Source information:
Source: RMDB library 15KREP, as collected in RNAgym. This 177-nucleotide RNA was probed chemically with DMS and 2A3. Reactivities are given for positions 27 through 126. The 2A3 profile rests on 2,167 reads. For DMS the reverse transcriptase was MarathonRT.
RNA sequence: GGGAACGACUCGAGUAGAGUCGAAAACCCCAGCCUCCUCGCUGGCGCCGGCUGGGCAACGAUCCGAGGGAACUAUUCCUCUCGAGAAUCGGCAAAUGGGGCCCCUCGCUCGUAUCUCCGAGAGGAGCCGAUAUGUAUGGUUCGCCAUACAUAUCGGAAAAGAAACAACAACAACAAC
Reactivity to DMS in 0.01 (KOAc 150mM, MgCl2 10mM, bicine 150mM(pH8.5), 24C), signal-to-noise 2, nucleotides 027 to 126: c090c010c000c050a070g010c040c000u000c030c010u000c070g000c020u000g010g030c110g000c060c050g030g040c080u020g000g010g010c070a090a080c000g010a030u010c040c030g000a050g020g000g010a080a120c250u000a190u010u000c030c000u000c000u000c000g010a100g000a100a120u000c000g020g010c100a050a090a050u010g000g000g020g020c010c000c010c020u010c040g020c050u010c070g010u020a080u010c020u010c030c040g020a120g010a120g020g000a050g030
Reactivity to 2A3 in 0.01 (KOAc 150mM, MgCl2 10mM, bicine 150mM(pH8.5), 24C), signal-to-noise 2, nucleotides 027 to 126: c000c010c000c010a030g030c000c020u040c010c010u070c040g030c040u050g000g020c030g050c010c010g020g060c030u090g010g040g000c020a050a060c010g000a020u000c020c010g020a030g000g000g020a010a040c040u090a220u160u060c020c020u080c000u000c020g110a120g020a170a040u040c000g020g020c040a060a060a100u160g030g000g040g000c000c010c000c000u040c050g050c020u090c020g010u100a080u050c030u000c000c040g020a020g000a020g040g020a000g000